[RMDB]
RNA sequence: GGGAACGACUCGAGUAGAGUCGAAAAGGCUCGAAGCAGGUGAUUUUCGAGGAUUAUGAUGAGCUGGGCUACAACUACCGCAUGACCGACCUGCAGGCCGCCGUCGGACGGGUGCAAUUGCGCCGGCUGCCGGAGCUGAUUGCGCAGCGCAGGCGGCCCCUAAUUGGACGUUCGCGUCCAAUUAGGGAAAAGAAACAACAACAACAAC
Reactivity to DMS in 0.01 (KOAc 150mM, MgCl2 10mM, bicine 150mM(pH8.5), 24C), signal-to-noise 1, nucleotides 027 to 156: g010g030c000u010c030g000a110a170g000c030a060g000g010u000g010a110u000u000u010u020c080g010a120g000g010a140u000u000a090u000g000a120u010g010a060g030c030u000g020g000g000c040u020a090c060a060a070c040u000a070c050c010g000c050a090u010g040a140c030c020g010a040c020c020u020g000c030a100g010g000c020c000g060c000c030g000u010c070g010g000a130c020g010g030g000u010g010c000a050a070u010u010g010c010g010c020c000g000g000c070u000g010c000c000g020g020a060g010c000u000g000a090u010u000g020c050g050c020a070g060c010g030c020a120g010g010c000g000g000c060
Reactivity to 2A3 in 0.01 (KOAc 150mM, MgCl2 10mM, bicine 150mM(pH8.5), 24C), signal-to-noise 4, nucleotides 027 to 156: g040g010c020u040c080g040a090a020g010c040a030g020g040u030g060a140u040u110u120u170c080g030a080g050g010a050u070u060a040u220g120a040u050g040a030g020c060u080g020g030g010c040u160a040c050a110a030c040u130a070c030c010g040c040a050u100g030a080c000c020g050a120c010c010u000g010c010a020g010g040c010c010g000c000c000g050u050c020g050g020a070c060g030g000g020u030g000c020a090a160u100u090g000c020g000c000c020g010g020c110u130g090c000c010g030g000a010g010c030u050g040a070u050u100g010c040g000c010a040g040c040g000c020a010g000g000c000g000g000c000
An RNA of 207 nucleotides, treated with DMS and 2A3 and read out base by base. Reactivities are given for positions 27 through 156. The 2A3 profile rests on 2,988 reads. Conditions: 150 mM KOAc, 10 mM MgCl2 and 150 mM bicine (pH 8.5), 24 C.